[RMDB]
RNA sequence: GGGAACGACUCGAGUAGAGUCGAAAAACGACACAAUUCGUUGUGUCGUAAUGGAAAAGGCUAGGACCGGCCAGACAAAGGUCCGAAAAGUUCGAAAGAUCACACGCCACGAAUUCGUUCGUGGCAAUGACAGAUGAAAAUUCGUUUUCAUCUGUCAAAAAGAAACAACAACAACAAC
Reactivity to 2A3 in 0.01 (KOAc 150mM, MgCl2 10mM, bicine 150mM(pH8.5), 24C), signal-to-noise 8, nucleotides 027 to 126: a010c000g000a000c010a000c000a010a040u090u100c170g040u090u020g010u000g000u010c000g000u010a020a050u080g020g020a030a070a110a210g010g000c020u060a070g040g000a000c010c000g000g000c000c020a010g010a000c050a020a140a000g000g000u000c000c000g000a000a010a010a010g040u030u030c020g020a080a030a020g030a040u050c030a020c000a010c240g000c010c000a010c000g010a000a020u080u080c200g040u080u000c000g000u020g000g000c000a000a000
Reactivity to DMS in 0.01 (KOAc 150mM, MgCl2 10mM, bicine 150mM(pH8.5), 24C), signal-to-noise 9, nucleotides 027 to 126: a040c010g010a010c000a010c000a010a030u000u010c180g010u000u000g020u000g010u000c000g010u000a020a060u010g010g010a100a100a120a140g000g010c010u000a110g020g000a010c000c000g000g000c000c010a140g000a110c230a030a060a150g000g010u000c000c000g010a030a050a080a080g000u000u000c020g010a100a090a130g000a030u000c060a120c240a080c190g000c000c000a010c000g010a020a020u000u010c180g010u000u000c000g020u000g000g000c010a000a010